The record gives the reactivity of an RNA of 177 nucleotides to 2A3 and DMS. The reactions ran in a buffer of 150 mM KOAc, 10 mM MgCl2 and 150 mM bicine (pH 8.5), at 24 C. For DMS the reverse transcriptase was MarathonRT. For DMS, 1,239 sequencing reads were counted.
RNA sequence: GGGAACGACUCGAGUAGAGUCGAAAAUAAAAAGCGUAGCAAAAAUUGGCGGAUGGGCAUGUCAAGGGCGUCUGGAGCAAUCCUGACGGACAUGCUGCUACGAAAAAUACAUGGGCUAAAAAAAAAACCUACAUGUAAUGUUCGCAUUACAUGUAGGAAAAGAAACAACAACAACAAC
Reactivity to 2A3 in 0.01 (KOAc 150mM, MgCl2 10mM, bicine 150mM(pH8.5), 24C), signal-to-noise 2, nucleotides 027 to 126: u050a010a090a020a010a000g080c000g000u040a000g010c040a020a050a080a100a300u110u060g060g020c040g030g010a020u060g050g010g010c010a000u000g000u000c050a090a110g160g120g110c000g000u000c020u050g000g030a020g030c020a000a040u000c000c000u000g000a000c000g000g000a000c010a010u000g000c010u020g010c010u000a000c020g050a100a040a010a010a000u110a030c060a080u060g030g020g020c060u050a000a040a000a000a020a000a020a000a000a130
Reactivity to DMS in 0.01 (KOAc 150mM, MgCl2 10mM, bicine 150mM(pH8.5), 24C), signal-to-noise 2, nucleotides 027 to 126: u010a050a110a110a100a060g010c060g010u000a010g020c000a070a060a050a130a100u030u000g000g000c050g020g000a060u000g000g000g040c000a000u010g000u000c020a120a090g020g000g020c060g040u000c030u030g000g000a000g000c300a080a080u000c000c000u010g000a040c010g020g000a030c010a010u000g020c020u000g000c020u000a010c010g010a020a040a120a020a080u000a050c050a020u010g030g010g030c030u000a000a010a000a000a000a050a030a030a140a220